[RMDB]
RNA sequence: GGGAACGACUCGAGUAGAGUCGAAAAUAGGCGUUCGAAAUAUUGAUGGUUUUAAUCAACGGAUUACCAAUGCACGCAAUCAAAGCAAAACUAUGACCCGCAGGGUACAAACAGGAUUUGAUACAGACCCACCGUUACUAUUCGUAGUAACGGUGGGAAAAGAAACAACAACAACAAC
Reactivity to DMS in 0.01 (KOAc 150mM, MgCl2 10mM, bicine 150mM(pH8.5), 24C), signal-to-noise 1, nucleotides 027 to 126: u010a090g000g000c030g020u000u000c060g020a080a040a030u000a100u010u000g010a050u000g020g000u000u000u000u000a060a110u000c120a080a090c180g010g040a070u020u000a030c020c050a020a060u000g010c080a020c060g000c050a100a070u020c090a040a020a180g010c080a080a080a100a140c130u000a080u010g000a070c010c020c030g020c160a010g000g040g000u020a040c140a080a120a120c090a080g000g000a190u000u000u000g010a000u010a090c160a050g030a210
Reactivity to 2A3 in 0.01 (KOAc 150mM, MgCl2 10mM, bicine 150mM(pH8.5), 24C), signal-to-noise 1, nucleotides 027 to 126: u060a010g150g000c010g000u010u010c050g090a070a110a080u210a100u060u180g060a060u060g010g070u000u070u080u270a140a040u070c070a110a170c080g050g000a000u020u010a010c010c000a040a030u170g020c040a010c020g010c020a010a020u050c030a050a020a080g100c000a040a050a030a030c050u060a100u090g050a010c040c020c030g120c140a070g000g000g000u190a140c020a010a090a010c050a040g090g040a100u000u020u050g050a030u170a030c030a020g050a060
This 177-nucleotide RNA was probed chemically with DMS and 2A3. The RNA was probed in 150 mM KOAc, 10 mM MgCl2 and 150 mM bicine (pH 8.5) at 24 C. The 2A3 profile rests on 780 reads. DMS (dimethyl sulfate) methylates the pairing face of unpaired adenines and cytosines. Reactivities are given for positions 27 through 126.